Conditions: 150 mM KOAc, 10 mM MgCl2 and 150 mM bicine (pH 8.5), 24 C. Structure probing data (DMS) for a 177-nucleotide construct. For DMS, 574 sequencing reads were counted. It was measured as part of the RMDB library OK2TRN.
RNA sequence: GGGAACGACUCGAGUAGAGUCGAAAAAUAUCGAAUCAGCUUUAGAGCGUGAGAAAUCAUCUUCUACAUACAUAGGUAAUUUUAUGGCGAUUCCUCAUGGAGAUCCUGAAAAAGUUUUACAAUCACACGUUUGCUGUCAAUUCGUUGACAGCAAACGAAAAGAAACAACAACAACAAC
Reactivity to DMS in 0.01 (KOAc 150mM, MgCl2 10mM, bicine 150mM(pH8.5), 24C), signal-to-noise 1, nucleotides 027 to 126: a080u020a080u000c060g000a170a050u000c130a120g000c050u000u000u000a020g030a120g000c170g000u000g000a060g000a040a060a030u000c020a030u000c050u000u020c020u000a060c130a030u020a100c160a080u030a100g030g010u010a020a060u000u020u020u000a070u010g030g000c050g010a120u030u000c030c020u000c070a010u000g020g000a070g000a050u010c030c000u000g000a030a030a090a110a040g020u000u000u020u020a110c100a040a000u020c130a110c190a110